The record gives the reactivity of an RNA of 177 nucleotides to DMS and 2A3. The data come from the RNA Mapping Database (RMDB), library M2PK50. The DMS profile rests on 1,299 reads. Reactivities are rounded to 0.1 and cut off at 0 and 3. Conditions: 150 mM KOAc, 10 mM MgCl2 and 150 mM bicine (pH 8.5), 24 C.
RNA sequence: GGGAACGACUCGAGUAGAGUCGAAAAACGAUGUCGUUCGCGACAUCGUAAAUUGUAUAACCUUGCUUGAAGUCAACUUGGUUGUAAAGCGAGACAAGUCAGUGAGAGUCCUAUUCGUAGGACUCAAUCCACUUUUCGAGUUCGCUCGAAAAGUGGAAAAAGAAACAACAACAACAAC
Reactivity to DMS in 0.01 (KOAc 150mM, MgCl2 10mM, bicine 150mM(pH8.5), 24C), signal-to-noise 2, nucleotides 027 to 126: a030c000g000a030u000g040u000c000g050u000u010c260g020c020g050a010c000a000u000c020g020u000a020a010a050u000u000g040u000a100u020a120a100c100c000u000u000g000c030u030u000g000a170a180g010u010c010a070a050c060u000u010g020g030u000u000g020u000a050a040a060g010c050g000a090g000a090c170a050a080g000u010c130a090g010u020g030a220g010a010g010u000c000c000u000a020u010u010c190g010u000a020g010g000a020c000u000c010a030a030
Reactivity to 2A3 in 0.01 (KOAc 150mM, MgCl2 10mM, bicine 150mM(pH8.5), 24C), signal-to-noise 1, nucleotides 027 to 126: a010c010g020a010u010g000u000c000g000u050u070c180g020c020g050a000c010a020u000c000g010u010a020a000a000u140u070g070u010a070u030a120a080c000c000u030u030g100c010u000u000g080a090a040g040u120c000a040a110c210u070u260g130g000u060u010g040u050a020a000a030g030c010g000a010g010a060c050a110a080g070u160c060a030g070u050g100a110g000a000g000u010c000c000u010a010u000u080c170g020u070a020g000g000a000c000u000c000a000a010